RNA sequence: GGGAACGACUCGAGUAGAGUCGAAAACCAGGGUCAACCUACGGAAAUCCCUGAGUUCCUCGGAUGUCCAGGCCGUCCCCUCUUCUAGAGAAGGGAGACUCCGGAACUUCUUCCAUGAUUGGGACGAGAUAGAUUUAACCUUCGGGUUAAAUCUAUCAAAAGAAACAACAACAACAAC
Reactivity to 2A3 in 0.01 (KOAc 150mM, MgCl2 10mM, bicine 150mM(pH8.5), 24C), signal-to-noise 2, nucleotides 027 to 126: c040c000a000g030g000g000u040c030a100a070c000c020u090a080c180g060g010a030a070a080u070c020c000c010u020g040a060g070u040u020c000c000u000c010g010g040a050u100g010u050c050c030a040g070g050c030c010g000u020c020c000c010c000u000c020u060u040c070u130a160g030a000g010a220a050g020g000g000a040g000a020c010u000c020c040g060g000a060a050c000u070u030c010u080u000c020c020a080u120g020a110u100u150g030g000g000a010c020g020a020
Reactivity to DMS in 0.01 (KOAc 150mM, MgCl2 10mM, bicine 150mM(pH8.5), 24C), signal-to-noise 2, nucleotides 027 to 126: c080c000a040g010g010g010u000c100a090a220c030c000u010a160c130g000g030a130a100a070u020c000c000c000u010g010a150g000u000u000c030c060u000c070g000g020a070u020g020u000c000c030a090g010g000c060c020g000u000c020c000c000c040u000c000u000u010c080u000a150g000a080g000a060a030g000g030g000a080g000a050c050u020c060c020g000g000a070a080c080u000u000c110u000u000c010c010a110u000g020a190u010u020g010g000g000a070c100g000a130
Chemical mapping of a 177-nucleotide RNA with 2A3 and DMS. For 2A3, 1,699 sequencing reads were counted. For DMS the reverse transcriptase was MarathonRT. Values are in units of 0.01, from 0 to 300, in steps of 10.